[RMDB]
RNA sequence: GGGAACGACUCGAGUAGAGUCGAAAAAAGCUCAUCAUUUCGAACAAGAAUUAAAUCGUAUCUAGGCUGUUCCUCUCCUAAUACUGGUGGAAUUAGAAGGAGAAAUGAUAUUACUGUCAUAAAGACACCACUGGAGUAGAUUCGUCUACUCCAGUGGAAAAGAAACAACAACAACAAC
Reactivity to 2A3 in 0.01 (KOAc 150mM, MgCl2 10mM, bicine 150mM(pH8.5), 24C), signal-to-noise 2, nucleotides 027 to 126: a000a000g070c080u060c040a030u020c010a030u010u020u020c020g030a060a060c010a090a050g140a060a050u090u050a030a070a040u090c030g000u030a010u000c110u030a030g050g000c040u070g080u110u040c020c000u040c010u000c000c000u030a040a030u010a060c030u100g000g060u030g000g010a040a050u050u030a050g100a150a020g030g040a060g020a000a020a020u030g000a010u030a060u180u180a070c070u050g010u010c010a070u170a290a170a040g010a010c010a010
Reactivity to DMS in 0.01 (KOAc 150mM, MgCl2 10mM, bicine 150mM(pH8.5), 24C), signal-to-noise 2, nucleotides 027 to 126: a070a140g020c090u000c020a080u010c010a060u000u000u000c030g010a290a180c120a090a100g020a030a050u010u000a050a120a030u000c050g000u000a020u000c150u010a080g010g010c190u010g000u000u000c030c050u000c090u000c020c000u000a040a050u000a010c030u020g020g040u020g000g010a080a020u000u000a040g000a080a080g000g000a300g000a020a040a020u010g000a010u000a080u020u000a090c260u000g000u000c010a050u010a080a110a170g010a020c040a060